The data come from the RNA Mapping Database (RMDB), library RNAMAK. Structure probing data (DMS and 2A3) for a 207-nucleotide construct. For DMS, 4,452 sequencing reads were counted. For DMS the reverse transcriptase was MarathonRT. 2A3 adducts were read by reverse transcription with SuperScript II with manganese. Conditions: 150 mM KOAc, 10 mM MgCl2 and 150 mM bicine (pH 8.5), 24 C.

[RMDB]
RNA sequence: GGGAACGACUCGAGUAGAGUCGAAAAGGGGUCCACUCCGCUACGGAUUUCAACGAGGAGGCAAGGGCUGAAGCCUCCACGGCCUGAUGACCCUCCUUAUCAAUCCGUAUGAGUGGACGGAGGCACCCAAAGAAGUAGACGUUCGCGUCUACUUCAACUGAUUGAUAUGUUUCGACAUAUCAAUCAGAAAAGAAACAACAACAACAAC
Reactivity to DMS in 0.01 (KOAc 150mM, MgCl2 10mM, bicine 150mM(pH8.5), 24C), signal-to-noise 2, nucleotides 027 to 156: g000g040g030g030u010c000c010a060c000u000c020c290g030c070u000a030c000g040g020a060u000u020u010c180a130a120c070g020a050g010g000a010g040g000c030a080a170g010g010g000c000u000g010a030a160g040c030c010u010c010c030a150c050g020g000c000c000u000g000a080u000g020a070c300c000c000u000c000c000u000u020a040u000c080a070a030u000c000c010g000u030a060u010g010a050g020u000g000g000a010c000g010g000a050g010g040c000a090c000c000c000a080a130a120g000a030a010g000u000a030g010a020c000g030u010u010c300g040c020g000u000c000u000a000c000u000u000c000a070a210
Reactivity to 2A3 in 0.01 (KOAc 150mM, MgCl2 10mM, bicine 150mM(pH8.5), 24C), signal-to-noise 5, nucleotides 027 to 156: g090g010g020g010u020c000c000a000c000u000c010c000g020c020u010a000c000g020g010a020u000u060u280c150a190a100c160g080a050g010g000a000g000g020c030a040a160g020g000g000c010u010g010a060a010g020c000c000u000c010c020a020c010g010g000c000c000u090g050a190u270g040a170c030c020c010u020c000c000u100u070a140u170c070a030a020u010c000c000g000u000a000u120g000a000g000u000g000g000a000c010g000g000a000g010g000c020a050c000c000c020a060a160a040g000a000a000g000u010a000g000a000c020g020u030u090c280g050c000g110u030c000u000a000c000u000u000c000a000a020